[RMDB]
RNA sequence: GGGAACGACUCGAGUAGAGUCGAAAACUGCUUUUCAACACAGGAUUGGUUAAACCCAAAGACAUUCAAAGAUGCAAUGAAUGCGCUAGGUCAAUGUAACGGGAUCAUCAAUGAUGGAGUUCCAAUACAUAUGGCACAAGCAAAACUAAUGCAUAGAACUAUGGGACGCAUUCGUGCGUCCCAUAGUAAAAGAAACAACAACAACAAC
Reactivity to 2A3 in 0.01 (KOAc 150mM, MgCl2 10mM, bicine 150mM(pH8.5), 24C), signal-to-noise 2, nucleotides 027 to 156: c010u000g030c000u120u020u120u120c080a120a130c100a010c020a160g130g070a120u030u060g050g010u000u020a080a010a040c000c010c010a010a040a000g060a040c000a000u000u000c000a000a070a020g060a060u030g030c000a080a080u030g040a050a050u050g030c040g000c100u060a040g030g060u000c020a000a030u020g020u020a040a010c040g000g000g050a020u140c040a000u020c040a090a300u280g050a010u090g100g070a100g110u010u000c000c000a000a050u020a010c010a000u030a220u190g040g000c100a090c040a180a030g010c000a010a010a010a000c030u160a260a000u080g000c000a000u020a130g050a010